The data come from the RNA Mapping Database (RMDB), library OK1LIB. Chemical mapping of a 177-nucleotide RNA with DMS and 2A3. The DMS profile rests on 2,737 reads.
[RMDB]
RNA sequence: GGGAACGACUCGAGUAGAGUCGAAAAGAAAGAAAGAAGAAACGAGGCUGCUAAAGCGCAAAAAGAAAAACGAAAGCGCAUUCGUAUCAGUUAAGGAGUCGCGAAAAGAAAGAAAGAAAGAAGAAAACAGUAUACUGCUGUUCGCAGCAGUAUACUGAAAAGAAACAACAACAACAAC
Reactivity to DMS in 0.01 (KOAc 150mM, MgCl2 10mM, bicine 150mM(pH8.5), 24C), signal-to-noise 2, nucleotides 027 to 126: g030a090a080a240g000a040a010a060g010a170a160g000a100a110a090c030g010a050g000g010c000u000g010c000u010a040a080a080g010c050g000c010a040a070a060a030a100g000a090a070a020a080a100c070g000a090a110a100g000c020g010c020a120u030u030c090g020u000a060u010c010a100g020u000u020a020a110g010g000a020g020u030c010g000c070g000a070a080a070a050g010a040a010a080g000a050a060a060g000a050a010a120g010a110a070g010a030a030a050a160
Reactivity to 2A3 in 0.01 (KOAc 150mM, MgCl2 10mM, bicine 150mM(pH8.5), 24C), signal-to-noise 2, nucleotides 027 to 126: g120a020a050a010g070a000a100a000g060a020a000g020a000a110a000c020g020a030g090g010c000u040g000c020u170a230a170a050g020c020g050c050a000a000a000a160a000g180a030a050a070a000a000c030g030a090a010a000g020c010g010c040a020u000u060c000g020u050a060u150c020a040g050u000u060a110a070g040g000a010g090u020c000g000c060g010a000a010a000a130g040a010a060a000g020a000a070a040g070a020a040a060g040a030a040g060a010a060a000a000